An RNA of 207 nucleotides, treated with 2A3 and read out base by base. For 2A3, 894 sequencing reads were counted. The reactions ran in a buffer of 150 mM KOAc, 10 mM MgCl2 and 150 mM bicine (pH 8.5), at 24 C. It was measured as part of the RMDB library OK3TST.
RNA sequence: GGGAACGACUCGAGUAGAGUCGAAAAAGGUCUUGCAGCCAGGCACCGUGGCUCACGCUUGUAAUCCCAGCACUGGGAGGCUGAGGCGGACGGAUCACCUGAGGUCAGGAGUUCAACACCAGCCUGGCCAACAUGGCGAAACCCCAUCUCUACCAAAGCUGAGAUCAUUUUUCGAAAUGAUCUCAGCAAAAGAAACAACAACAACAAC
Reactivity to 2A3 in 0.01 (KOAc 150mM, MgCl2 10mM, bicine 150mM(pH8.5), 24C), signal-to-noise 2, nucleotides 027 to 156: a020g060g000u050c070u040u090g020c000a000g000c020c010a020g030g020c020a060c080c040g010u060g090g000c020u020c020a020c030g010c040u060u070g090u260a060a070u000c020c020c020a000g120c140a140c230u040g000g010g010a000g000g000c010u020g020a030g050g060c040g030g030a030c080g000g000a010u040c000a040c090c000u020g010a010g000g080u070c040a000g000g020a020g020u090u020c080a200a030c020a100c080c030a020g050c020c000u000g000g020c000c000a000a030c000a000u060g030g010c000g000a060a100a120c040c010c000c010a050u040c040u000c020u060a110c020c110a050a210a000